RNA sequence: GGGAACGACUCGAGUAGAGUCGAAAAAUUCACCUGUCUUUAUCCCGAGAUGGUACUAAUGUACUCUGACAUGCUAGAAGGGAGGAGUGCUACAGCAAUGUUUACCCAGAUGAUCGAAUUCCUGGAGAGCUAUUACCAAAUUCGUUUGGUAAUAGCUAAAAGAAACAACAACAACAAC
Reactivity to 2A3 in 0.01 (KOAc 150mM, MgCl2 10mM, bicine 150mM(pH8.5), 24C), signal-to-noise 8, nucleotides 027 to 126: a010u100u060c050a050c040c010u010g060u020c020u020u100u080a140u060c010c010c010g010a020g000a030u050g020g030u040a050c040u140a060a150u170g010u030a010c010u000c020u050g020a020c010a070u150g080c040u140a090g030a220a120g100g010g010a010g000g020a020g000u020g010c010u030a030c020a030g020c020a030a130u100g060u080u120u120a080c010c010c010a030g020a120u110g020a030u120c070g050a060a130u140u020c010c010u040g020g040a180g020
Reactivity to DMS in 0.01 (KOAc 150mM, MgCl2 10mM, bicine 150mM(pH8.5), 24C), signal-to-noise 9, nucleotides 027 to 126: a100u010u010c070a060c050c010u000g020u000c010u000u000u000a130u010c010c020c010g010a080g000a070u000g010g010u000a070c080u010a090a120u020g010u000a030c020u000c070u000g010a240c080a050u000g010c090u010a080g010a130a100g010g010g000a210g010g000a060g020u000g010c030u000a060c130a040g010c090a050a060u000g010u000u000u000a130c050c020c020a080g000a060u010g000a080u010c070g010a080a150u010u000c020c010u000g020g010a150g010